[RMDB]
RNA sequence: GGGAACGACUCGAGUAGAGUCGAAAAGGACUUAGGUUCGCCUAAGUCCAAAUAACGUCUACAAGUACGCUAGACGAAGAUAACGUACAGUACAGAAGUACAAAAGGAGAGACUUCGGUCUCUCCAACAGUUAGAUACCGUUCGCGGUAUCUAACUGAAAAGAAACAACAACAACAAC
Reactivity to 2A3 in 0.01 (KOAc 150mM, MgCl2 10mM, bicine 150mM(pH8.5), 24C), signal-to-noise 4, nucleotides 027 to 126: g000g000a000c000u010u000a000g010g020u050u030c180g060c040c000u000a000a000g010u020c000c000a000a000a000u010a010a010c020g000u010c010u010a030c010a130a070g230u050a060c100g010c090u010a010g000a020c040g030a050a020g090a060u180a070a040c070g010u040a020c070a070g020u040a030c020a090g190a210a030g110u010a020c030a050a090a020a040g010g000a000g000a000g000a000c000u010u030c160g080g000u000c000u000c000u000c000c000a000a000
Reactivity to DMS in 0.01 (KOAc 150mM, MgCl2 10mM, bicine 150mM(pH8.5), 24C), signal-to-noise 3, nucleotides 027 to 126: g010g000a010c000u000u000a000g000g010u010u020c260g030c000c000u000a000a010g000u000c010c000a010a020a040u010a080a160c060g000u000c000u000a030c060a120a150g010u000a030c090g000c190u000a010g000a080c040g000a090a140g000a090u010a050a050c120g010u000a030c050a110g010u000a050c120a130g010a040a100g000u000a030c060a040a100a080a100g020g000a010g000a030g010a010c010u010u020c230g010g000u000c000u000c000u000c000c000a010a050
This 177-nucleotide RNA was probed chemically with 2A3 and DMS. For DMS, 2,625 sequencing reads were counted. The RNA was probed in 150 mM KOAc, 10 mM MgCl2 and 150 mM bicine (pH 8.5) at 24 C. 2A3 adducts were read by reverse transcription with SuperScript II with manganese. Reactivities are given for positions 27 through 126.